[RMDB]
RNA sequence: GGGAACGACUCGAGUAGAGUCGAAAAAAAAGAUUUCUGAGACAAACACGCUUCACAAUGUGCGGCAAAGAAACAUUGAUUAUGCAAAGGCACUUCGCAAUGUGUGCUCAAACAUUGCUUAUUCAAAAAAAGAUUUUAGACUUCGGUCUAAAAUCAACAUUCUUUCUCAGUUCGCUGAGAAAGAAUGAAAAGAAACAACAACAACAAC
Reactivity to 2A3 in 0.01 (KOAc 150mM, MgCl2 10mM, bicine 150mM(pH8.5), 24C), signal-to-noise 2, nucleotides 027 to 156: a000a000a000a020g140a050u130u150u060c080u120g080a090g020a090c090a030a220a010c040a020c040g020c010u040u050c020a030c010a110a040u020g010u020g000c010g040g010c050a070a090a060g040a010a030a000c000a000u010u040g070a070u110u240a040u180g070c070a080a100a070g150g000c000a010c010u000u010c010g000c000a010a000u020g010u000g050u010g020c060u090c180a050a040a000c000a010u000u010g000c000u050u100a190u150u140c090a060a090a010a020a010a000a030g010a000u010u010u010u000a000g000a000c000u020u060c180g040g010u000c010u000a000a000a000a010u000c000a000a000
Reactivity to DMS in 0.01 (KOAc 150mM, MgCl2 10mM, bicine 150mM(pH8.5), 24C), signal-to-noise 1, nucleotides 027 to 156: a030a010a080a130g010a210u030u000u010c020u010g010a300g020a100c060a120a130a160c090a040c020g000c060u000u040c130a250c060a070a040u030g100u000g020c070g000g020c000a020a130a000g040a100a000a030c030a030u010u010g000a260u000u010a060u000g020c040a000a300a110g000g040c000a040c040u000u000c210g070c100a090a030u000g000u000g030u000g010c000u000c100a070a140a010c030a040u000u000g000c010u010u000a000u000u010c020a000a000a030a300a050a210a140g000a030u000u010u010u010a070g000a010c000u000u000c300g050g030u000c010u010a000a000a000a000u000c000a090a130